[RMDB]
RNA sequence: GGGAACGACUCGAGUAGAGUCGAAAAUCAGCUGGAGGAAAUUUCCCGGGCUCAGCUUGUGGUAAAGACUGAGAUUCUUUUGACAGGUUGGGCAGUUCGGUGGCACUUCGGGAAUGUACUGUACGUGGUGGAGCGGGAGGCAGGGAAGAACAGGCGACACUAAAAUCAUGUUCGCAUGAUUUUAGUGAAAAGAAACAACAACAACAAC
Reactivity to DMS in 0.01 (KOAc 150mM, MgCl2 10mM, bicine 150mM(pH8.5), 24C), signal-to-noise 1, nucleotides 027 to 156: u010c030a030g030c030u000g050g040a080g020g000a130a080a140u000u000u010c010c010c040g030g010g000c000u000c020a010g020c000u000u000g030u010g040g020u000a040a030a040g000a270c070u010g000a200g000a280u010u000c010u000u000u000u000g010a090c050a040g000g020u000u000g020g020g050c010a040g020u010u000c060g010g020u020g010g020c060a050c110u000u000c050g000g000g000a060a100u000g000u000a070c060u000g030u010a080c070g010u010g030g020u000g020g000a180g020c100g000g000g000a060g010g000c060a080g010g000g000a070a050g020a040a110c040a060g000g010c000g000a200
Reactivity to 2A3 in 0.01 (KOAc 150mM, MgCl2 10mM, bicine 150mM(pH8.5), 24C), signal-to-noise 2, nucleotides 027 to 156: u060c010a000g040c040u060g030g030a020g000g080a060a110a160u060u050u030c020c000c000g000g030g020c000u000c000a000g000c000u030u020g060u040g040g190u060a030a020a000g010a010c060u180g120a070g020a300u070u030c010u020u050u010u050g030a020c010a010g020g000u000u020g010g000g000c000a010g030u080u070c040g010g040u000g030g020c040a030c080u090u070c060g030g000g010a040a050u060g060u140a050c030u040g030u080a040c040g050u070g040g030u080g040g040a150g020c080g000g030g010a020g050g000c060a020g030g040g010a070a050g000a040a010c030a010g070g020c020g020a010